[RMDB]
RNA sequence: GGGAACGACUCGAGUAGAGUCGAAAACAUAACAAGGUAGGAUCUCUACAAUACUUGGCACUAGCAGCAUUAAUAACACCAAAAAAGAUAAAGCCACCUUUGCCUAGUGUUACGAAACUGACAGAGGAUAGAUGGAACAAGCCCCAGAAGACCAAGGAAAUGCCAACCAUUUCGAUGGUUGGCAUUUAAAAGAAACAACAACAACAAC
Reactivity to DMS in 0.01 (KOAc 150mM, MgCl2 10mM, bicine 150mM(pH8.5), 24C), signal-to-noise 1, nucleotides 027 to 156: c080a170u000a130a130c060a080a070g060g000u000a050g000g000a090u020c060u000c070u000a150c080a030a120u000a080c090u020u010g000g000c030a060c070u000a090g020c080a120g010c070a060u000u000a110a040u000a070a110c100a000c060c000a000a020a060a080a170a110g000a100u010a020a120a090g000c010c020a080c060c020u010u000u000g040c070c030u010a040g100u000g000u000u010a300c050g000a100a060a090c040u010g000a100c000a070g040a040g000g000a030u000a070g010a080u000g010g000a000a100c020a210a080g030c000c010c010c020a180g000a050a040g000a040c070c030a070a130g000g000
Reactivity to 2A3 in 0.01 (KOAc 150mM, MgCl2 10mM, bicine 150mM(pH8.5), 24C), signal-to-noise 2, nucleotides 027 to 156: c040a080u230a030a020c030a040a000g160g000u050a010g060g140a170u050c110u010c000u060a040c010a050a080u060a080c040u030u080g040g000c000a000c010u030a040g010c000a000g000c000a090u100u070a110a150u170a090a030c020a010c040c000a010a040a020a090a020a040g080a080u220a100a160a000g010c030c060a040c050c020u000u000u110g010c010c020u080a070g000u030g030u030u010a030c070g030a150a000a000c070u040g070a010c000a030g110a050g010g000a000u080a060g130a110u040g010g000a000a030c050a050a000g050c010c000c000c030a020g060a090a000g010a080c030c000a030a000g060g030